[RMDB]
RNA sequence: GGGAACGACUCGAGUAGAGUCGAAAAGCCAACAUGCUCCUUACAUGGUAAUCUUAGAGAAUUCACUACAGAACAAGUUUAGUCCGGGAAAUUACCCGUUGAUCUGGAGCUAUGCUAUUGGUGUGGGAGCGGUAGAACAAUUCGUUGUUCUACCGCUAAAAGAAACAACAACAACAAC
Reactivity to DMS in 0.01 (KOAc 150mM, MgCl2 10mM, bicine 150mM(pH8.5), 24C), signal-to-noise 2, nucleotides 027 to 126: g020c010c010a080a130c070a050u000g010c000u000c000c000u000u010a030c050a070u000g000g010u010a020a080u000c010u000u000a080g010a110g010a070a070u010u000c080a060c040u010a110c210a150g000a040a110c170a050a050g010u010u000u010a050g000u010c060c020g000g000g020a050a100a080u000u000a040c020c000c300g020u000u000g000a070u000c050u010g000g000a010g010c000u010a010u000g010c260u000a080u010u000g000g000u000g020u000g040g000g000
Reactivity to 2A3 in 0.01 (KOAc 150mM, MgCl2 10mM, bicine 150mM(pH8.5), 24C), signal-to-noise 2, nucleotides 027 to 126: g010c020c000a000a020c020a020u010g010c000u020c000c000u050u080a020c020a010u080g030g020u010a020a050u020c010u040u180a070g040a000g040a200a160u080u040c030a030c040u120a070c050a050g110a180a010c060a130a060g040u020u050u010a010g110u020c030c030g000g000g050a090a270a060u060u030a060c030c020c060g060u050u050g000a140u000c000u050g000g000a020g000c020u080a030u010g070c020u030a050u090u040g020g010u020g010u060g060g170g030